[RMDB]
RNA sequence: GGGAACGACUCGAGUAGAGUCGAAAAGAUAUGGAUCCGGUGGUGCUAGCUGGAUCAUCGGAAACGAUGAUUUUAGCUUGGACCACCACACGGAUCCUAAGUCAAAAGAUACGCUUCGGCGUAUCAACAUCGUACGGAGGUUCGCCUCCGUACGAUGAAAAGAAACAACAACAACAAC
Reactivity to DMS in 0.01 (KOAc 150mM, MgCl2 10mM, bicine 150mM(pH8.5), 24C), signal-to-noise 2, nucleotides 027 to 126: g010a040u010a300u000g000g000a000u010c000c000g010g050u000g010g020u000g020c100u000a040g070c010u010g000g000a010u000c000a000u000c000g010g020a140a100a160c000g010a000u000g000a000u000u000u000u000a010g000c020u000u010g020g000a180c300c000a010c000c000a010c010a030c060g040g000a000u000c010c000u010a010a070g010u000c030a090a120a130a100g000a010u000a000c010g010c030u000u030c240g030g020c010g000u000a000u000c000a120a250
Reactivity to 2A3 in 0.01 (KOAc 150mM, MgCl2 10mM, bicine 150mM(pH8.5), 24C), signal-to-noise 2, nucleotides 027 to 126: g030a000u100a050u180g020g010a010u000c010c010g000g030u010g010g060u020g080c070u120a110g000c000u020g000g000a000u000c000a000u000c000g000g090a090a010a040c020g010a030u030g030a020u000u040u170u300a000g030c000u010u140g040g080a040c000c010a010c000c020a010c010a010c000g000g030a010u000c000c010u010a080a000g070u020c040a010a040a030a300g000a000u010a000c000g000c000u060u110c300g150g000c000g000u020a000u000c000a000a000

This 177-nucleotide RNA was probed chemically with DMS and 2A3. Source: RMDB library TTRDES, as collected in RNAgym.